[RMDB]
Chemical mapping of a 177-nucleotide RNA with DMS. The DMS profile rests on 917 reads. The data come from the RNA Mapping Database (RMDB), library M2PK50. The RNA was probed in 150 mM KOAc, 10 mM MgCl2 and 150 mM bicine (pH 8.5) at 24 C.
RNA sequence: GGGAACGACUCGAGUAGAGUCGAAAAGGCCUGACGUUCGCGUCAGGCCAAACCUGGAGGAGGAUGGAACACUGGGCGGAGCCGAUACCCAGGACAGGGCAGAAACUGUCCCGUUCGCGGGACAGAAUCUUGCUAAUGCGUUCGCGCAUUAGCAAGAAAAAGAAACAACAACAACAAC
Reactivity to DMS in 0.01 (KOAc 150mM, MgCl2 10mM, bicine 150mM(pH8.5), 24C), signal-to-noise 1, nucleotides 027 to 126: g020g010c010c000u010g000a050c000g030u000u010c180g030c020g040u010c010a000g000g050c000c010a000a020a050c060c030u000g010g040a030g000g010a070g010g010a020u010g000g000a120a070c120a120c100u000g010g010g030c070g000g000a090g030c030c050g000a070u010a060c040c010c040a100g020g010a020c150a050g000g000g010c110a070g000a060a080a240c010u000g040u000c000c000c020g030u000u000c180g000c030g040g010g000a040c010a000g000a040a050